[RMDB]
RNA sequence: GGGAACGACUCGAGUAGAGUCGAAAACACAUAUAUAUACACACACACAUAUACAUGUAUAUACACACAUGUAUAUUUUUUCUAUAUAUUCGCAUAGUAGCACCUUUUCAUUGAAAGUAUUUUGAUGUGAUAACUAUGGUGUCCAACCGUGAGAAAAGAGCUCAGUACUAUUCGUAGUACUGAGCUCAAAAGAAACAACAACAACAAC
Reactivity to 2A3 in 0.01 (KOAc 150mM, MgCl2 10mM, bicine 150mM(pH8.5), 24C), signal-to-noise 1, nucleotides 027 to 156: c010a010c040a020u050a020u000a000u020a000u080a180c040a010c010a000c000a010c000a000c030a080u000a000u000a000c010a000u010g000u040a120u040a040u120a260c010a010c000a000c000a050u000g010u020a010u000a010u030u000u040u000u080u010c020u070a180u000a060u000a040u100u150c000g000c050a030u040a040g010u050a040g010c000a040c000c000u150u090u060u070c030a060u090u130g070a110a080a030g100u100a140u080u230u070u070g070a090u070g020u000g010a060u040a170a010c110u060a040u100g020g000u010g010u000c000c000a000a020c000c000g000u040g060a060g070a000a010a130a000